[RMDB]
RNA sequence: GGGAACGACUCGAGUAGAGUCGAAAAUUCUUCGCCGUACUCUUUGUGCUCCUCCUCGGCGCCUACACCGCGAUCUGGCGGCCGUCGCUGCGCUUCGCCAGGCACGCGCACGGCUGGGUGAUCCUCAGAUGGCGGACGUAUUCGUACGUCCGCCAUCAAAAGAAACAACAACAACAAC
Reactivity to 2A3 in 0.01 (KOAc 150mM, MgCl2 10mM, bicine 150mM(pH8.5), 24C), signal-to-noise 1, nucleotides 027 to 126: u060u000c000u070u020c050g000c030c020g080u110a100c000u030c000u020u170u100g050u050g050c000u020c000c000u030c000c020u020c000g010g000c000g070c000c000u010a010c030a040c060c010g030c000g030a090u030c040u010g110g000c000g020g000c000c000g000u010c020g020c060u040g000c060g030c000u040u060c000g040c020c010a010g000g000c020a070c010g000c010g000c020a020c020g020g020c010u090g020g000g020u060g020a070u040c010c010u020c030a070
This 177-nucleotide RNA was probed chemically with 2A3.
The data come from the RNA Mapping Database (RMDB), library OK1LIB.
2A3 adducts were read by reverse transcription with SuperScript II with manganese.
For 2A3, 839 sequencing reads were counted.
The RNA was probed in 150 mM KOAc, 10 mM MgCl2 and 150 mM bicine (pH 8.5) at 24 C.